[RMDB]
Chemical mapping of a 177-nucleotide RNA with DMS and 2A3. The reactions ran in a buffer of 150 mM KOAc, 10 mM MgCl2 and 150 mM bicine (pH 8.5), at 24 C. For 2A3, 5,231 sequencing reads were counted.

RNA sequence: GGGAACGACUCGAGUAGAGUCGAAAAGAUAUGGAACCAUGGGCAUACAUAGCAUCGAUCUCGGAAACGAGGGAGCUAUUAAUGCGAUUCAUGGUUCCUAAGUCAAACCAGUACUUCGGUACUGGAAUCAGUUCUAUCAGUUCGCUGAUAGAACUGAAAAAGAAACAACAACAACAAC
Reactivity to DMS in 0.01 (KOAc 150mM, MgCl2 10mM, bicine 150mM(pH8.5), 24C), signal-to-noise 2, nucleotides 027 to 126: g010a040u010a300u010g020g010a010a000c000c010a020u000g000g010g000c020a020u000a090c300a030u000a000g010c010a270u010c130g000a050u010c000u010c010g000g000a090a070a200c000g000a010g000g010g010a020g000c010u000a020u000u000a160a040u010g000c020g020a150u030u000c000a010u000g010g000u000u010c000c000u000a000a050g020u000c060a070a150a210c000c000a010g010u000a010c000u000u020c150g030g020u000a000c000u000g000g000a030a040
Reactivity to 2A3 in 0.01 (KOAc 150mM, MgCl2 10mM, bicine 150mM(pH8.5), 24C), signal-to-noise 3, nucleotides 027 to 126: g020a020u080a030u170g000g000a000a000c020c000a010u010g060g040g080c000a010u040a080c040a010u010a060g030c030a130u300c060g070a090u020c010u000c010g030g040a070a060a060c010g000a020g000g030g010a020g010c010u010a000u010u080a140a040u010g010c070g100a150u160u220c010a010u000g000g000u000u010c000c000u000a010a000g010u000c030a010a050a150c000c000a020g010u000a000c000u020u150c300g120g000u000a000c010u020g030g000a000a070